[RMDB]
Overview: An RNA of 177 nucleotides, treated with DMS and 2A3 and read out base by base. Reactivities are rounded to 0.1 and cut off at 0 and 3. Conditions: 150 mM KOAc, 10 mM MgCl2 and 150 mM bicine (pH 8.5), 24 C. For 2A3, 1,110 sequencing reads were counted. Reactivities are given for positions 27 through 126. It was measured as part of the RMDB library OK2TRN.
RNA sequence: GGGAACGACUCGAGUAGAGUCGAAAACGCACCGCCGGGCUCGAGAGAAAGCAGGCGACCAGGCCGAACCAGGCCACGUGGGCGAGCGCGAUGAAGGCCCCGUAGCCCAGUUGCGCCGGCAACGCGAGCUGGCGAUAAAUUUCGAUUUAUCGCCAGCAAAAGAAACAACAACAACAAC
Reactivity to DMS in 0.01 (KOAc 150mM, MgCl2 10mM, bicine 150mM(pH8.5), 24C), signal-to-noise 1, nucleotides 027 to 126: c070g060c070a080c090c020g050c020c010g030g000g020c000u010c020g010a150g040a140g030a080a120a080g020c040a160g000g000c000g020a120c090c110a100g010g010c020c020g000a090a080c130c070a200g000g000c000c040a070c020g010u000g020g000g010c010g000a080g020c060g010c060g000a030u000g020a160a190g010g000c020c000c070c170g030u000a080g000c000c030c020a260g030u000u010g000c000g000c000c070g030g010c100a090a040c070g000c080g000a020
Reactivity to 2A3 in 0.01 (KOAc 150mM, MgCl2 10mM, bicine 150mM(pH8.5), 24C), signal-to-noise 1, nucleotides 027 to 126: c000g010c020a040c080c000g060c000c010g190g110g010c010u030c110g230a220g010a020g060a220a030a000g000c050a030g030g000c010g020a020c030c050a070g020g000c000c000g050a030a060c030c030a020g000g000c000c040a010c030g090u120g060g010g030c040g060a050g000c050g000c000g010a010u050g030a030a010g090g010c020c020c020c000g110u130a020g030c020c010c010a030g020u020u050g000c060g000c000c020g060g090c030a110a000c030g040c000g040a070